Structure probing data (2A3) for a 177-nucleotide construct.
2A3 adducts were read by reverse transcription with SuperScript II with manganese.
For 2A3, 364 sequencing reads were counted.
The data come from the RNA Mapping Database (RMDB), library OK1LIB.
The reactions ran in a buffer of 150 mM KOAc, 10 mM MgCl2 and 150 mM bicine (pH 8.5), at 24 C.
Values cover nucleotides 27 to 126.

RNA sequence: GGGAACGACUCGAGUAGAGUCGAAAAUACUAAAAUGGCAACCAGUGUUAUUCAGUUUGGUUCAUUUGUGUGCAAUCUUCCAAAGUCCCAGCCACUAUGCACAACUGUGCACUGCCCAAAACAGAGCACGGCACUCCCAAUUCGUUGGGAGUGCCGUAAAAGAAACAACAACAACAAC
Reactivity to 2A3 in 0.01 (KOAc 150mM, MgCl2 10mM, bicine 150mM(pH8.5), 24C), signal-to-noise 1, nucleotides 027 to 126: u080a030c040u080a130a050a050a000u060g030g000c000a010a040c000c000a000g000u050g020u170u290a200u090u160c030a030g010u020u190u080g090g000u030u040c000a000u000u140u170g090u000g000u000g080c000a170a240u050c020u100u000c070c020a100a220a000g010u000c020c000c020a000g000c000c000a100c020u010a050u000g000c000a000c000a110a270c110u170g000u000g000c050a000c000u030g000c000c000c060a060a090a110a060c140a020g010a000g170c000